RNA sequence: GGGAACGACUCGAGUAGAGUCGAAAAACCUGUGGGAAAGGUCCAACCUCACAUGUCCUGUAUAGAAUAAAGAGGGAUAUAUGUGGUCAGACCUAUCCCACAAGUAAAACUCCAGCUUCGGCUGGAGCCAACUCAUAAGGUUCGCCUUAUGAGUUGGAAAAGAAACAACAACAACAAC
Reactivity to 2A3 in 0.01 (KOAc 150mM, MgCl2 10mM, bicine 150mM(pH8.5), 24C), signal-to-noise 1, nucleotides 027 to 126: a000c010c010u010g000u000g000g000g000a020a010a010g020g000u030c020c000a020a010c010c000u000c000a020c000a000u010g000u000c010c010u040g070u090a160u080a170g260a280a120u210a250a170a020g130a070g000g030g000a000u000a000u000a000u010g000u010g030g000u030c050a010g010a000c000c000u000a020u000c000c000c000a000c000a000a000g000u000a000a030a040a030c010u000c000c000a000g010c010u060u150c200g120g010c010u000g000g000a000g000
Reactivity to DMS in 0.01 (KOAc 150mM, MgCl2 10mM, bicine 150mM(pH8.5), 24C), signal-to-noise 2, nucleotides 027 to 126: a100c010c010u000g040u000g030g030g010a020a190a030g000g010u000c000c040a120a040c000c000u010c000a010c040a010u000g000u000c000c000u000g000u000a230u000a100g000a160a160u000a080a070a080g010a290g010g000g000a000u000a010u000a030u000g000u000g010g010u000c060a150g000a000c000c000u000a050u010c010c000c010a010c010a000a010g010u000a040a010a050a260c020u000c000c000a000g000c000u000u010c160g020g010c000u000g000g000a010g000